[RMDB]
RNA sequence: GGGAACGACUCGAGUAGAGUCGAAAAUGAUUUAUUUGCAGAACACGGUUCAAAUAUUUGGUUUGAAAGAGAAGCGAAAGACUUACUACCAGAAGGAUUUACACAUCCAGGCAGCCCUAACGGUACACUGAGAGUGUAGAUUCGUCUACACUCUCAGAAAAGAAACAACAACAACAAC
Reactivity to DMS in 0.01 (KOAc 150mM, MgCl2 10mM, bicine 150mM(pH8.5), 24C), signal-to-noise 4, nucleotides 027 to 126: u000g000a130u000u010u000a040u000u000u000g040c080a070g020a090a120c080a060c100g020g020u010u010c030a010a030a030u000a070u020u010u010g010g010u000u000u010g000a070a060a080g000a090g020a130a080g020c060g020a070a050a120g020a070c050u000u020a070c070u000a060c030c030a090g010a100a100g000g000a050u000u010u020a090c180a050c130a060u000c040c030a060g010g000c080a080g010c020c020c020u000a040a050c100g000g010u010a070c270a130
Reactivity to 2A3 in 0.01 (KOAc 150mM, MgCl2 10mM, bicine 150mM(pH8.5), 24C), signal-to-noise 2, nucleotides 027 to 126: u050g050a010u000u110u110a090u030u080u190g030c050a040g030a190a030c070a020c080g090g010u060u070c040a040a040a020u100a080u070u160u120g070g030u050u030u060g050a040a090a020g080a030g050a070a000g010c030g050a170a030a000g050a010c000u010u070a060c000u060a050c010c020a010g040a080a040g040g000a010u020u030u140a050c080a020c010a030u070c050c000a010g020g000c000a020g040c000c000c000u000a040a010c030g070g010u050a040c060a000
Description
Source: RMDB library OK2TST, as collected in RNAgym. Structure probing data (DMS and 2A3) for a 177-nucleotide construct. For 2A3 the reverse transcriptase was SuperScript II with manganese. The reactions ran in a buffer of 150 mM KOAc, 10 mM MgCl2 and 150 mM bicine (pH 8.5), at 24 C. Reactivities are rounded to 0.1 and cut off at 0 and 3. For 2A3, 1,298 sequencing reads were counted.